[RMDB]
RNA sequence: GGGAACGACUCGAGUAGAGUCGAAAAACAGACUUUGCCAGAAAGCAGCGGUGGCGAAUAUCGCACAACGGACGGAUGCCUGAUGCAACGAAGCCGCGUGAGGGAUGAAGGGAUCCGGGCUCCGGGCUAUAUAAUUGUUAUUCGUAACAAUUAUAUAAAAAGAAACAACAACAACAAC
Reactivity to DMS in 0.01 (KOAc 150mM, MgCl2 10mM, bicine 150mM(pH8.5), 24C), signal-to-noise 8, nucleotides 027 to 126: a100c070a090g010a090c070u000u010u010g010c010c020a070g010a100a080a100g010c070a090g010c050g000g010u000g000g010c030g000a100a070u030a070u020c040g000c030a080c100a110a090c070g000g010a090c050g010g020a060u010g010c010c040u000g000a110u020g000c070a070a010c090g000a100a120g010c020c020g000c100g020u010g010a080g000g000g010a080u010g000a130a080g010g010g000a040u010c040c030g000g010g010c050u010c040c040g000g000g000c110
Reactivity to 2A3 in 0.01 (KOAc 150mM, MgCl2 10mM, bicine 150mM(pH8.5), 24C), signal-to-noise 6, nucleotides 027 to 126: a000c030a000g130a050c020u070u050u090g000c000c000a020g060a030a080a010g020c050a010g010c020g030g020u040g020g010c020g020a080a060u150a060u160c050g070c030a060c050a140a100c060g040g050a010c030g030g030a030u120g110c010c020u080g020a070u110g010c020a010a040c030g070a060a010g020c020c000g020c030g050u060g030a060g010g040g010a030u060g040a050a040g030g000g010a010u000c010c000g020g020g000c000u010c010c000g020g020g000c000